An RNA of 207 nucleotides, treated with DMS and 2A3 and read out base by base. DMS adducts were read by reverse transcription with MarathonRT. The DMS profile rests on 3,647 reads. For 2A3, 9,739 sequencing reads were counted. Source: RMDB library RNAMAK, as collected in RNAgym.
RNA sequence: GGGAACGACUCGAGUAGAGUCGAAAAGGGGUCACUUCUGUGAUGCAGAGGGCAGAGAGGUAGGACUGAAGCCUCCACGGUCCUACUACCCACCUCUGCCUACCCACCUGUGCAUGGAGUGACGGAGGCACCCAAAACAGUCGUUUCGACGACUGAACGAGGAUACAGUAUUCGUACUGUAUCCUCGAAAAGAAACAACAACAACAAC
Reactivity to DMS in 0.01 (KOAc 150mM, MgCl2 10mM, bicine 150mM(pH8.5), 24C), signal-to-noise 2, nucleotides 027 to 156: g000g000g040g020u000c000a060c070u000u010c020u010g030u020g070a140u010g000c020a040g010a250g010g000g010c100a030g020a040g010a300g040g020u000a000g010g000a020c010u000g000a070a120g000c030c010u000c000c000a300c100g000g000u000c000c010u000a010c020u000a070c070c000c030a300c050c010u000c010u000g030c000c000u000a010c020c030c070a300c040c000u000g000u000g030c030a040u000g010g000a030g030u020g000a020c050g040g010a030g080g020c000a040c010c040c000a050a000a170a230c000a010g020u000c000g010u000u000u010c170g040a130c020g010a040c010u010g000a040a150
Reactivity to 2A3 in 0.01 (KOAc 150mM, MgCl2 10mM, bicine 150mM(pH8.5), 24C), signal-to-noise 5, nucleotides 027 to 156: g040g010g020g000u020c010a010c010u040u010c010u030g120u070g150a300u300g030c000a000g010a020g010g020g000c020a000g010a000g000a000g010g010u000a000g000g000a000c000u020g020a050a010g020c000c000u000c000c000a010c010g010g000u000c030c000u000a000c000u030a020c040c080c010a060c020c010u000c000u000g020c010c000u040a050c030c030c010a080c010c010u030g020u090g040c020a040u180g020g010a010g000u000g000a010c030g000g000a010g000g000c000a030c000c010c000a040a070a020a040c010a000g000u000c000g030u050u110u230c230g140a050c000g010a010c010u010g030a060a030